The data come from the RNA Mapping Database (RMDB), library OK2TST. An RNA of 177 nucleotides, treated with 2A3 and DMS and read out base by base. Reactivities are given for positions 27 through 126. Conditions: 150 mM KOAc, 10 mM MgCl2 and 150 mM bicine (pH 8.5), 24 C. DMS adducts were read by reverse transcription with MarathonRT.
RNA sequence: GGGAACGACUCGAGUAGAGUCGAAAAGAGUUUGAAGACAACAUUGAUGGCGGACUGGAACGUGUGAAAGAAGUGAUUGACUAUGUCCAACAUGGUACUCAUCCGAGCGAGUAGGUGCAUUUAUGCAUGGUUAGUUCACGUUCGCGUGAACUAACCAAAAAGAAACAACAACAACAAC
Reactivity to 2A3 in 0.01 (KOAc 150mM, MgCl2 10mM, bicine 150mM(pH8.5), 24C), signal-to-noise 1, nucleotides 027 to 126: g020a000g000u160u130u120g060a090a030g050a040c060a040a020c030a050u130u170g020a030u080g130g060c010g030g030a030c070u000g020g020a120a020c000g080u060g040u030g080a110a030a090g030a020a000g100u100g110a020u010u090g020a010c010u020a060u110g050u060c020c010a020a050c010a010u010g000g000u060a030c000u020c050a060u000c020c070g010a060g050c000g030a040g040u060a030g000g100u060g000c020a030u050u060u120a100u080g100c020a040
Reactivity to DMS in 0.01 (KOAc 150mM, MgCl2 10mM, bicine 150mM(pH8.5), 24C), signal-to-noise 2, nucleotides 027 to 126: g000a090g000u000u000u010g000a040a060g000a050c100a050a090c040a090u000u000g000a110u000g030g020c080g000g020a060c060u000g010g010a070a050c070g000u000g030u000g020a050a110a080g010a150a090g010u000g000a080u000u000g020a040c070u010a060u010g020u000c130c120a030a140c040a040u010g010g020u000a040c070u000c060a080u000c050c070g020a070g010c030g000a030g000u000a030g000g020u000g030c020a060u000u020u010a060u020g010c040a110